[RMDB]
RNA sequence: GGGAACGACUCGAGUAGAGUCGAAAAGGCCGCGAAGAGAGAAGACUGCGUUCUUGUCACAGACGAUGAUGAUCGCAUCGCUGGUAUUUUCACAGCGAAGGAUCUUGCGUUCCGUGUGGUCGGAAACGCUCCUACGAAGUUUCGACUUCGUAGGAGCAAAAGAAACAACAACAACAAC
Reactivity to DMS in 0.01 (KOAc 150mM, MgCl2 10mM, bicine 150mM(pH8.5), 24C), signal-to-noise 2, nucleotides 027 to 126: g020g010c040c020g020c000g010a110a100g010a120g010a090g010a070a040g000a040c070u010g010c150g000u010u010c010u010u000g000u010c000a050c040a150g000a050c040g000a050u020g010a060u010g010a020u000c000g010c080a120u000c000g000c000u000g000g000u010a150u000u010u010u000c070a130c000a010g030c000g020a040a160g000g000a030u000c010u000u000g010c030g000u010u000c030c040g000u010g020u010g000g010u010c010g000g000a060a060a130c160
Reactivity to 2A3 in 0.01 (KOAc 150mM, MgCl2 10mM, bicine 150mM(pH8.5), 24C), signal-to-noise 3, nucleotides 027 to 126: g010g020c020c020g000c050g130a210a070g110a010g030a000g030a040a040g030a020c040u100g070c090g060u040u020c000u040u060g120u040c020a050c010a060g050a050c060g010a030u090g020a020u070g020a010u020c020g000c190a030u020c010g020c010u030g060g000u050a180u060u180u110u120c230a210c000a070g000c000g000a020a040g060g000a030u010c000u000u080g030c030g040u140u000c030c010g060u070g020u020g050g030u000c000g020g040a050a040a000c070